[RMDB]
RNA sequence: GGGAACGACUCGAGUAGAGUCGAAAAGGGCUUUACACGGUCGUAGAGCUUGCUUCGCGGUCGUAAUGGCGGAGACCUUUGAAUACAAGGGCUAGGGAUUCGGGGUGUAUGUCAGACGGUACAUGAGAUUCCUUGGAUCCUUCGGGAUCCAAGGAAUAAAAGAAACAACAACAACAAC
Reactivity to DMS in 0.01 (KOAc 150mM, MgCl2 10mM, bicine 150mM(pH8.5), 24C), signal-to-noise 2, nucleotides 027 to 126: g020g000g000c010u000u000u000a070c060a090c000g000g010u010c020g000u000a000g010a050g000c060u010u010g000c040u010u020c050g000c060g000g040u020c140g000u010a080a080u010g010g020c050g000g000a030g000a190c020c020u000u000u010g010a160a140u070a060c060a060a100g000g010g000c080u020a040g020g000g010a110u000u020c020g000g040g000g020u000g010u030a050u000g050u010c040a050g000a110c120g020g000u020a060c040a100u010g000a120g010
Reactivity to 2A3 in 0.01 (KOAc 150mM, MgCl2 10mM, bicine 150mM(pH8.5), 24C), signal-to-noise 2, nucleotides 027 to 126: g000g000g000c000u010u000u000a020c030a010c020g060g000u030c020g020u090a040g030a040g000c020u070u070g030c030u050u020c010g010c010g090g010u050c060g050u030a040a110u100g060g020c000g010g000a030g000a010c000c000u010u040u140g060a040a020u210a070c040a090a040g000g050g000c020u080a020g010g120g000a020u070u050c060g000g020g010g030u040g010u060a060u080g020u040c000a040g000a060c050g080g000u100a060c040a090u070g020a040g000

Conditions: 150 mM KOAc, 10 mM MgCl2 and 150 mM bicine (pH 8.5), 24 C. This 177-nucleotide RNA was probed chemically with DMS and 2A3. For 2A3, 982 sequencing reads were counted. For 2A3 the reverse transcriptase was SuperScript II with manganese. DMS adducts were read by reverse transcription with MarathonRT.